An RNA of 177 nucleotides, treated with DMS and 2A3 and read out base by base. For 2A3 the reverse transcriptase was SuperScript II with manganese. The data come from the RNA Mapping Database (RMDB), library TTRINS.

[RMDB]
RNA sequence: GGGAACGACUCGAGUAGAGUCGAAAAGAUAUGGAUUACACUUUGAUGACCUAUGGCCAAUCAAGACGAUGUAUCGGAAACGAUACAUCGUCUUGGAGCCAUAGCAAGAAGAAAUAAUCCUAAGUCACUUCAUAUACAACUUCGGUUGUAUAUGAAGAAAAGAAACAACAACAACAAC
Reactivity to DMS in 0.01 (KOAc 150mM, MgCl2 10mM, bicine 150mM(pH8.5), 24C), signal-to-noise 5, nucleotides 027 to 126: g020a040u010a300u000g000g010a030u000u000a020c290a300c000u000u000u000g000a110u010g000a110c300c010u000a000u000g010g000c000c060a160a180u010c010a000a000g020a020c000g000a010u000g030u010a000u000c030g010g000a110a110a210c000g010a010u010a010c000a000u000c000g000u000c010u000u000g010g000a100g010c000c000a000u000a000g000c030a060a110g000a020a020g010a070a090a300u000a010a020u000c010c000u000a060a160g010u000c050a120
Reactivity to 2A3 in 0.01 (KOAc 150mM, MgCl2 10mM, bicine 150mM(pH8.5), 24C), signal-to-noise 4, nucleotides 027 to 126: g030a030u080a060u220g020g000a000u040u050a060c120a010c200u080u020u100g200a300u200g050a170c010c000u010a020u010g020g000c030c030a090a180u180c020a000a020g000a000c000g010a000u000g000u010a000u000c000g060g010a110a080a030c010g000a000u010a010c000a000u000c010g000u000c000u000u010g000g000a000g000c000c000a010u010a000g020c000a220a300g010a010a010g020a050a210a020u070a000a000u040c020c020u060a260a030g080u060c010a010